[RMDB]
RNA sequence: GGGAACGACUCGAGUAGAGUCGAAAACGUCCAUUCGUGGACGGAUUGUCCUAAGUCGCUUCGGGUCCGUGCAAGCGUGUGUCGGAAACGACACAAAAACGUGAUGACCACGGAUCUCUAGCGUGAGCGAUAUGGAGUGUAAAGGCUUCGGCCUUAAGUUGCAUGUACGAUUCGUCGUACAUGCAACAAAAGAAACAACAACAACAAC
Reactivity to 2A3 in 0.01 (KOAc 150mM, MgCl2 10mM, bicine 150mM(pH8.5), 24C), signal-to-noise 3, nucleotides 027 to 156: c010g010u000c000c000a040u040u070c300g150u100g000g020a030c020g030g030a110u140u300g060u050c000c000u040a190a070g110u000c000g000c000u040u030c020g010g020g000u000c010c000g000u000g020c040a190a260g000c020g010u020g010u000g000u010c010g000g050a120a050a080c000g000a010c000a000c000a050a210a020a000a000c030g020u060g050a300u110g010a080c100c000a020c000g000g010a020u020c030u000c050u050a030g030c050g060u120g000a010g010c030g000a010u020a070u210g100g000a090g050u150g030u220a080a070a020g000g000c010u010u120c250g070g000c010c030u040u020a070a070
Reactivity to DMS in 0.01 (KOAc 150mM, MgCl2 10mM, bicine 150mM(pH8.5), 24C), signal-to-noise 1, nucleotides 027 to 156: c000g040u010c000c000a080u010u000c280g050u000g070g010a030c020g000g000a030u000u000g020u010c000c060u000a110a300g000u000c000g000c000u000u000c000g000g010g010u010c000c010g030u030g030c020a020a240g030c030g000u000g050u010g030u000c000g010g000a120a150a280c040g000a050c020a000c020a000a040a070a130a120c040g040u010g020a130u000g020a200c200c000a020c010g000g020a020u000c030u000c010u000a020g030c080g030u030g000a030g020c000g030a120u010a200u000g010g000a130g060u010g030u000a040a070a020g000g000c020u000u040c180g060g000c020c000u000u000a020a210
Conditions: 150 mM KOAc, 10 mM MgCl2 and 150 mM bicine (pH 8.5), 24 C. Chemical mapping of a 207-nucleotide RNA with 2A3 and DMS. For DMS the reverse transcriptase was MarathonRT. For DMS, 2,569 sequencing reads were counted. Reactivities are given for positions 27 through 156. The 2A3 profile rests on 1,864 reads.